[RMDB]
The record gives the reactivity of an RNA of 207 nucleotides to 2A3. Source: RMDB library RSTRND, as collected in RNAgym. The 2A3 profile rests on 1,289 reads.
RNA sequence: GGGAACGACUCGAGUAGAGUCGAAAACCAGCCUACCGAUUCAGGCUUCGCCUUCCGGCCUGAAUCGGGAAAACUCAGGAAGGCUGUGGGAGAGGACACCCUGCCCGUGGGAGGUCCCUCCCGAGAGCGAAAACACGGGCUGCGCUCGGAGAAGCCCCAGUCCAUUUAGGUUCGCCUAAAUGGACUGAAAAGAAACAACAACAACAAC
Reactivity to 2A3 in 0.01 (KOAc 150mM, MgCl2 10mM, bicine 150mM(pH8.5), 24C), signal-to-noise 2, nucleotides 027 to 156: c030c000a020g100c000c030u050a060c020c000g020a000u000u000c000a000g010g000c000u050u060c100g000c000c000u010u010c000c020g000g000c000c010u010g000a000a000u000c000g040g000g010a020a020a000a000c210u200c070a030g030g000a000a000g000g010c000u010g190u050g000g000g000a040g000a150g000g000a010c010a090c000c010c010u030g000c000c000c000g000u010g010g010g000a080g040g000u020c000c000c000u020c000c000c000g000a000g000a000g010c230g120a000a020a020a040c010a000c010g000g010g010c000u000g000c010g010c000u010c030g140g060a110g020a180a020g060c010c020c000